The record gives the reactivity of an RNA of 177 nucleotides to 2A3 and DMS. Reactivities are given for positions 27 through 126. For DMS, 1,273 sequencing reads were counted. The RNA was probed in 150 mM KOAc, 10 mM MgCl2 and 150 mM bicine (pH 8.5) at 24 C.
RNA sequence: GGGAACGACUCGAGUAGAGUCGAAAAAUCGAUCGUCAAAUUUGGGUAUAGGGGCGAAAGACUAAUCGAACCAUCUGGUAGCUGGUUCCUGCCGAAGUUUCCCUCAGGAUAGCAGUAACGUUUUCAGUCAUGCGGGUACUUUCGAGUACCCGCAUGAAAAAGAAACAACAACAACAAC
Reactivity to 2A3 in 0.01 (KOAc 150mM, MgCl2 10mM, bicine 150mM(pH8.5), 24C), signal-to-noise 1, nucleotides 027 to 126: a000u050c000g020a050u000c000g000u130c150a010a070a080u150u010u050g140g140g000u180a220u060a120g000g000g000g000c020g000a000a000a000g000a000c050u100a030a040u160c020g000a010a000c020c020a020u120c060u060g010g000u010a000g070c000u060g120g070u000u070c000c000u070g100c100c000g170a100a060g010u000u090u000c000c000c000u000c080a000g000g000a040u020a120g080c010a000g010u090a120a000c110g000u000u000u060u060c010a050g140
Reactivity to DMS in 0.01 (KOAc 150mM, MgCl2 10mM, bicine 150mM(pH8.5), 24C), signal-to-noise 1, nucleotides 027 to 126: a000u060c040g010a070u000c080g040u000c100a000a000a250u000u000u010g040g080g040u000a040u020a060g020g000g010g070c000g000a050a070a050g020a200c150u000a040a030u010c010g010a110a040c120c000a000u000c150u030g000g010u000a070g000c050u000g040g000u000u000c040c010u000g040c040c040g040a150a010g030u000u000u000c000c000c000u000c070a030g000g030a090u000a020g010c020a070g020u020a060a050c150g000u070u000u000u000c000a030g000
For 2A3, 445 sequencing reads were counted.